Source: RMDB library OK2TRN, as collected in RNAgym. This 177-nucleotide RNA was probed chemically with 2A3 and DMS.
RNA sequence: GGGAACGACUCGAGUAGAGUCGAAAAAAUGACCAAACAGGGCGAUGCGAUAACGGGGUCGAUGGUCUUUUUCUGCGUUAUUGGUGCCCCGCUCAUUCUGGUGACCUCCAUAGCUUAUUUAUGGUUAAAUAAUAGCCUCAUUCGUGAGGCUAUUAUUAAAAGAAACAACAACAACAAC
Reactivity to 2A3 in 0.01 (KOAc 150mM, MgCl2 10mM, bicine 150mM(pH8.5), 24C), signal-to-noise 2, nucleotides 027 to 126: a000a000u110g040a040c020c000a080a040a000c070a070g000g010g000c010g040a060u090g080c020g030a030u020a070a030c040g060g000g000g020u060c060g060a050u070g080g120u080c020u050u110u010u040u010c040u080g110c020g040u030u030a040u060u020g110g020u100g000c000c060c000c000g000c000u020c010a090u180u040c050u060g020g010u030g060a060c000c010u060c000c010a020u030a030g030c040u230u080a090u130u300u020a050u140g000g000u020u050a090
Reactivity to DMS in 0.01 (KOAc 150mM, MgCl2 10mM, bicine 150mM(pH8.5), 24C), signal-to-noise 7, nucleotides 027 to 126: a060a050u000g000a080c030c020a070a080a130c160a090g000g000g020c020g010a070u010g010c040g010a030u010a040a060c050g000g010g010g010u000c110g000a070u000g010g010u010c030u010u000u010u010u000c040u000g000c050g010u000u000a050u000u000g010g020u010g010c030c020c020c030g000c060u000c060a100u000u000c080u000g000g010u010g000a090c060c020u000c010c010a020u000a030g010c190u010u010a100u010u000u000a040u010g000g000u000u000a050
Source information
The 2A3 profile rests on 2,461 reads. The DMS profile rests on 15,830 reads.